[RMDB]
RNA sequence: GGGAACGACUCGAGUAGAGUCGAAAAGAAGUCCCCGUGGAGCUUUACUGCAGCCUGUAGCUGUGACGCGAUUUUUAAUGCGUAGGGUAGGAAGGAGCCGUAGAUGUUUCGGUCGUGGCCAGAAUGGCCUAAAUGUCAUCUUCGGAUGACAUUUAGGAAAAGAAACAACAACAACAAC
Reactivity to 2A3 in 0.01 (KOAc 150mM, MgCl2 10mM, bicine 150mM(pH8.5), 24C), signal-to-noise 9, nucleotides 027 to 126: g120a060a020g100u040c000c000c000c000g040u080g030g030a040g020c020u080u080u120a070c050u070g010c020a030g040c010c020u140g080u160a030g010c020u030g050u090g070a020c020g010c010g030a050u050u020u020u060u270a160a100u170g010c020g010u030a050g040g020g010u040a040g040g040a050a040g020g020a010g000c010c010g010u020a030g010a110u070g040u030u050u040c020g010g010u020c030g030u050g020g010c010c010a020g090a150a110u140g080g010
Reactivity to DMS in 0.01 (KOAc 150mM, MgCl2 10mM, bicine 150mM(pH8.5), 24C), signal-to-noise 9, nucleotides 027 to 126: g010a140a170g010u000c010c000c010c090g020u010g010g010a070g010c040u010u010u010a070c090u010g010c020a070g010c030c060u010g010u020a120g020c030u010g010u020g010a050c040g010c020g010a060u020u020u020u020u030a070a110u020g010c020g020u000a080g000g000g010u000a060g010g010a100a060g000g010a160g010c050c060g010u010a060g010a070u010g000u000u000u000c040g000g010u010c060g010u010g000g000c010c020a110g010a090a070u020g010g010

The data come from the RNA Mapping Database (RMDB), libraries RFM100 and RFMREP. Chemical mapping of a 177-nucleotide RNA with 2A3 and DMS. For 2A3 the reverse transcriptase was SuperScript II with manganese. DMS adducts were read by reverse transcription with MarathonRT.